[RMDB]
RNA sequence: GGGAACGACUCGAGUAGAGUCGAAAAUUUUGGUUUACCAUUUUGUGCAACAAUAGUAUUGGGUUCGUUUUGGUUGUCAAGCUUUACAGCGAUCAAGUACGAGCAAGGCGAUCGUAAAGUUCAGGAAUAAAGACUAUUGUUUCGACAAUAGUCUUUAAAAAGAAACAACAACAACAAC
Reactivity to 2A3 in 0.01 (KOAc 150mM, MgCl2 10mM, bicine 150mM(pH8.5), 24C), signal-to-noise 3, nucleotides 027 to 126: u070u060u040u030g060g060u100u050u070a090c030c010a060u070u060u050u130g090u030g060c040a070a040c010a050a100u060a060g050u060a070u100u120g090g010g000u020u030c010g010u000u000u010u020g070g000u000u010g060u060c040a060a030g010c000u070u080u070a080c080a040g010c020g020a000u100c030a010a050g010u030a050c030g000a010g040c010a010a010g040g000c030g000a030u030c050g070u080a060a030a080g030u060u090c050a030g030g120a050a030
Reactivity to DMS in 0.01 (KOAc 150mM, MgCl2 10mM, bicine 150mM(pH8.5), 24C), signal-to-noise 9, nucleotides 027 to 126: u000u000u010u010g010g020u000u010u000a100c040c020a100u000u000u010u000g020u010g010c070a070a070c050a060a090u010a070g010u010a300u000u000g010g010g010u000u000c030g020u000u000u010u000g010g000u000u000g020u010c060a080a190g010c070u000u000u010a080c170a130g010c040g000a050u000c110a050a130g000u010a030c070g000a040g010c040a040a080g010g010c060g010a030u000c050g010u000a040a040a080g000u000u000c060a080g000g010a110a140

Source: RMDB library OK2TST, as collected in RNAgym. Chemical mapping of a 177-nucleotide RNA with 2A3 and DMS. Reactivities are given for positions 27 through 126. The RNA was probed in 150 mM KOAc, 10 mM MgCl2 and 150 mM bicine (pH 8.5) at 24 C. For 2A3, 2,501 sequencing reads were counted.